[RMDB]
RNA sequence: GGGAACGACUCGAGUAGAGUCGAAAAAGUCGGAACAACUCAAAGGGGAGAAACAACACGAACUCUCGUGACAAUUCCAACAACAGAGGAAAAUCUCAGUCUCGUAAUAGCUCACGCAACCGCGGACAGCAGCGUAAUAAUAACCAACAACGCCAGGACAACACAAUACGUUCGCGUAUUGUGUUGUAAAAGAAACAACAACAACAAC
Reactivity to 2A3 in 0.01 (KOAc 150mM, MgCl2 10mM, bicine 150mM(pH8.5), 24C), signal-to-noise 4, nucleotides 027 to 156: a000g060u050c020g010g030a050a040c040a030a070c040u060c120a060a110a120g060g010g040g000a030g050a040a150a030c080a040a030c050a010c060g020a110a070c020u040c010u030c080g040u040g020a030c040a040a110u090u020c050c010a030a010c030a010a060c020a120g030a030g030g060a040a060a040a110u070c040u010c020a030g080u000c020u020c090g020u030a060a050u010a220g000c010u020c040a050c040g000c020a060a100c080c120g000c030g030g000a040c020a040g000c010a020g000c010g010u010a000a010u070a030a050u060a050a060c040c030a000a060c040a050a000c080g020c050c010a030g070g020
Reactivity to DMS in 0.01 (KOAc 150mM, MgCl2 10mM, bicine 150mM(pH8.5), 24C), signal-to-noise 2, nucleotides 027 to 156: a140g000u010c040g050g040a060a060c020a050a120c050u030c030a140a100a110g000g020g000g010a150g010a110a100a080c050a060a160c030a070c040g010a100a140c030u010c040u010c060g000u000g000a080c080a050a140u000u000c030c070a070a100c040a060a110c090a100g000a130g000g000a060a040a040a080u010c050u000c010a080g010u010c020u010c050g000u000a050a070u020a050g000c020u000c040a080c090g020c000a130a110c020c030g000c040g000g010a090c070a110g020c000a060g000c040g080u010a080a160u010a090a080u000a040a130c070c020a070a040c040a020a030c030g000c030c030a080g020g010